An RNA of 207 nucleotides, treated with DMS and 2A3 and read out base by base. For DMS, 6,047 sequencing reads were counted. High DMS reactivity at an A or C suggests that its Watson-Crick edge is free. The data come from the RNA Mapping Database (RMDB), library OK3TST. For 2A3, 2,179 sequencing reads were counted. The reactions ran in a buffer of 150 mM KOAc, 10 mM MgCl2 and 150 mM bicine (pH 8.5), at 24 C.
RNA sequence: GGGAACGACUCGAGUAGAGUCGAAAAGGUCAAUUGUAACUGCGGAUCGGCCUAACUAAGGCGUGGUUGGUGCGACGGUCCGGGACACCCGAGCCUGUCUCUCUGUGUAUGGUGACCCAGACAACAACACCGACACAAGAGGACAAUAAUCCGUUAGUGAAGGAUAAUACUUCGGUAUUAUCCUUCAAAAAGAAACAACAACAACAAC
Reactivity to DMS in 0.01 (KOAc 150mM, MgCl2 10mM, bicine 150mM(pH8.5), 24C), signal-to-noise 3, nucleotides 027 to 156: g010g030u010c040a070a170u000u000g020u010a090a120c080u000g010c020g020g030a040u000c030g030g020c010c010u000a080a120c110u010a080a050g020g020c060g050u010g020g020u010u000g000g000u000g000c010g030a130c300g020g040u010c000c020g000g020g040a150c070a080c030c020c020g030a090g020c030c030u010g010u000c040u000c030u010c030u010g030u010g030u000a110u010g020g000u000g000a210c150c070c050a160g000a130c050a080a080c040a090a090c010a060c000c000g030a060c010a030c030a010a080g000a060g010g020a060c020a050a140u010a060a150u000c020c010g010u000u010a130g000
Reactivity to 2A3 in 0.01 (KOAc 150mM, MgCl2 10mM, bicine 150mM(pH8.5), 24C), signal-to-noise 4, nucleotides 027 to 156: g090g020u050c040a070a110u160u060g040u120a110a100c030u090g060c040g020g000a020u040c030g050g010c010c000u040a070a020c040u040a110a070g160g010c060g080u090g030g040u050u030g000g000u120g020c050g050a080c010g080g000u000c000c000g000g010g000a060c020a030c010c040c020g020a020g060c060c100u120g030u090c070u040c020u020c030u160g030u020g040u080a180u220g050g030u040g010a060c000c070c030a030g070a150c030a070a030c020a020a020c000a050c010c000g020a010c000a010c000a070a040g010a030g060g020a020c000a000a030u100a070a070u040c010c000g000u020u090a040g020